[RMDB]
RNA sequence: GGGAACGACUCGAGUAGAGUCGAAAAGCACGCACCUGUAAUGCCAGCUACUUGGGAGGCUAAGGCAGGAGAAUCGCUGGAAUCUGGGAGGCGGAGGUUGAAGUGAGGUGAUACCACACCGUUGCACGCCCCUCUAGUGAUUCGUCACUAGAGGGGCAAAAGAAACAACAACAACAAC
Reactivity to DMS in 0.01 (KOAc 150mM, MgCl2 10mM, bicine 150mM(pH8.5), 24C), signal-to-noise 1, nucleotides 027 to 126: g010c030a070c110g020c020a110c000c020u090g000u000a050a050u000g010c050c040a100g000c040u000a050c130u000u020g000g000g030a100g000g000c030u000a080a170g000g010c030a000g000g030a110g040a060a020u000c050g020c020u010g020g010a140a040u020c090u020g040g000g000a070g000g030c040g010g000a050g010g000u000u010g000a090a150g030u000g000a110g010g000u000g010a130u000a130c090c040a080c080a030c030c070g010u000u010g040c100a100c150
Structure probing data (DMS) for a 177-nucleotide construct. Source: RMDB library OK2TRN, as collected in RNAgym. Reactivities are given for positions 27 through 126. DMS adducts were read by reverse transcription with MarathonRT. For DMS, 963 sequencing reads were counted.